[RMDB]
RNA sequence: GGGAACGACUCGAGUAGAGUCGAAAAGCUCUAGGAGACUAGAGCAAUACGUACGAGCGAUCGUGUCACUGAACUCAGAUAGCCAGUUCAGAGGCUGGCAAAGGACAUAGCUAUAGCUAUGUCCAAAGACCAUUCAAACCUUCGGGUUUGAAUGGUCAAAAGAAACAACAACAACAAC
Reactivity to DMS in 0.01 (KOAc 150mM, MgCl2 10mM, bicine 150mM(pH8.5), 24C), signal-to-noise 1, nucleotides 027 to 126: g000c000u000c000u050a010g000g000a230g060a050c000u000a000g000a000g010c000a060a000u140a120c200g000u040a050c040g000a000g000c220g000a210u000c070g000u000g000u000c010a110c010u000g000a280a060c000u000c020a220g000a250u090a020g040c090c010a000g070u030u040c010a010g010a080g000g000c000u050g010g030c010a100a050a100g020g000a010c000a000u000a000g000c000u000a050u020a150g040c000u000a030u030g030u000c000c000a000a030a060
Reactivity to 2A3 in 0.01 (KOAc 150mM, MgCl2 10mM, bicine 150mM(pH8.5), 24C), signal-to-noise 1, nucleotides 027 to 126: g000c000u000c000u000a000g000g000a030g040a120c030u050a000g000a000g000c030a030a000u070a030c040g000u030a020c010g010a040g030c060g030a050u050c010g050u020g090u040c020a030c110u060g040a140a040c010u020c090a040g000a120u300a010g010c010c010a010g000u010u080c020a080g060a040g160g000c000u000g000g000c010a110a100a000g000g000a000c000a000u000a000g020c000u060a010u000a300g010c000u000a000u000g010u000c000c000a000a000a000
Structure probing data (DMS and 2A3) for a 177-nucleotide construct. The RNA was probed in 150 mM KOAc, 10 mM MgCl2 and 150 mM bicine (pH 8.5) at 24 C. The data come from the RNA Mapping Database (RMDB), library OK1LIB. For 2A3 the reverse transcriptase was SuperScript II with manganese.